[RMDB]
RNA sequence: GGGAACGACUCGAGUAGAGUCGAAAAAAAGCAUUAAUCAACUUCCAAGUGAUUCAGAUGGAGUGAUUGCAACUAAUAAUGGACUUUUGUUCACUAGACAUUUUUCUGGUGCAGUAGCUAGUGGUGAUUAUUACUAUGCAGUGAGCGGCAAAAUUCCGGACAAUGUAUCCUUCGGGAUACAUUGUCCAAAAGAAACAACAACAACAAC
Reactivity to 2A3 in 0.01 (KOAc 150mM, MgCl2 10mM, bicine 150mM(pH8.5), 24C), signal-to-noise 1, nucleotides 027 to 156: a000a000a000g110c030a030u050u090a020a110u140c040a030a040c000u300u000c030c030a060a060g140u040g130a240u120u220c000a000g160a170u130g010g010a000g070u010g010a070u030u030g030c010a080a030c040u080a020a110u130a080a120u070g010g010a010c000u100u020u090u180g010u040u080c030a010c030u000a000g040a060c010a100u090u030u100u200u150c030u020g070g000u000g030c060a060g000u000a000g030c000u010a000g030u000g100g000u010g010a000u000u060a000u010u030a070c030u010a010u130g070c000a000g000u000g130a000g070c040g050g000c090a030a000a020a050u140u100c040c020

Source: RMDB library OK3TST, as collected in RNAgym. The record gives the reactivity of an RNA of 207 nucleotides to 2A3. The RNA was probed in 150 mM KOAc, 10 mM MgCl2 and 150 mM bicine (pH 8.5) at 24 C. For 2A3 the reverse transcriptase was SuperScript II with manganese.